[RMDB]
RNA sequence: GGGAACGACUCGAGUAGAGUCGAAAAGAUAUGGACGUAGACAUGCUCAGGGUCGGAAACGACCCGGGAGCAACAGCUACGGUCCUAAGUCAAAACCUAAUCACGCUCUUCGGAGCGUGAUUAGGAACGUACAUUUCGCGUUCGCGCGAAAUGUACGAAAAGAAACAACAACAACAAC
Reactivity to DMS in 0.01 (KOAc 150mM, MgCl2 10mM, bicine 150mM(pH8.5), 24C), signal-to-noise 1, nucleotides 027 to 126: g000a020u000a220u000g000g000a180c000g010u000a010g050a000c070a230u000g010c010u000c000a250g000g000g020u000c010g010g000a000a110a090c020g010a000c010c010c000g000g000g000a000g000c000a000a050c300a130g000c000u000a000c000g040g010u020c000c000u000a020a160g000u000c020a020a190a050a230c000c000u000a000a000u000c000a010c010g040c010u000c000u000u000c160g010g000a010g000c000g020u000g000a000u000u030a000g020g000a010a060